[RMDB]
RNA sequence: GGGAACGACUCGAGUAGAGUCGAAAAUUUCAGGGGCUAAAACUUACUACCGAAGCUACGGCAUCAGUAAUGAUGGGUAGGGGAGCUUCCCAUACGGGUUGAAGCAUGACCGUAAGGACAUGUGGACCAUGCUGGCUAUGUUCGCAUAGCCAGCAUGAAAAGAAACAACAACAACAAC
Reactivity to DMS in 0.01 (KOAc 150mM, MgCl2 10mM, bicine 150mM(pH8.5), 24C), signal-to-noise 3, nucleotides 027 to 126: u020u050u040c130a060g030g000g000g030c020u020a030a070a100a070c090u020u010a070c130u000a040c060c050g000a110a150g020c040u000a060c110g020g030c070a030u000c030a020g010u100a040a090u000g020a060u000g000g000g030u010a010g030g010g000g000a080g030c170u010u000c000c050c000a130u040a040c200g000g000g010u000u010g010a210a080g000c000a000u000g030a100c000c010g000u060a150a130g000g040a100c000a020u000g000u000g000g000a100c190
Reactivity to 2A3 in 0.01 (KOAc 150mM, MgCl2 10mM, bicine 150mM(pH8.5), 24C), signal-to-noise 3, nucleotides 027 to 126: u060u050u080c040a050g000g000g000g000c040u170a060a000a080a060c060u040u050a030c010u040a060c010c010g050a060a000g020c050u040a040c040g060g010c010a000u010c010a040g110u120a090a120u080g050a050u050g000g030g040u060a050g010g000g000g020a020g010c000u060u020c010c010c000a100u150a100c200g070g020g000u010u110g020a010a000g030c010a000u000g030a050c010c010g120u160a020a190g020g000a000c000a000u020g060u020g030g000a010c000
The record gives the reactivity of an RNA of 177 nucleotides to DMS and 2A3. For DMS the reverse transcriptase was MarathonRT. The 2A3 profile rests on 1,669 reads.